[RMDB]
RNA sequence: GGGAACGACUCGAGUAGAGUCGAAAAGAUAUGGAAAACCGACCAGCUGGUAUUUAAGGAGAAACACGUCGGAAACGACGUGAAUUUCGCGAAACUUAUGUACCAGCUGGUCGGUUUUCCUAAGUCAGCAUCAAUAUAUGUUCGCAUAUAUUGAUGCAAAAGAAACAACAACAACAAC
Reactivity to DMS in 0.01 (KOAc 150mM, MgCl2 10mM, bicine 150mM(pH8.5), 24C), signal-to-noise 3, nucleotides 027 to 126: g000a070u010a300u000g000g000a040a010a010a030c010c000g020a030c000c000a000g010c000u000g000g000u000a000u000u010u010a000a000g010g030a120g000a020a010a270c010a010c010g020u000c010g010g020a120a110a210c020g010a030c000g010u000g000a020a180u000u000u000c010g030c200g020a160a110a300c000u000u000a000u000g000u000a000c010c000a010g030c000u010g000g000u000c000g000g000u000u000u000u000c000c000u000a010a070g000u000c040a180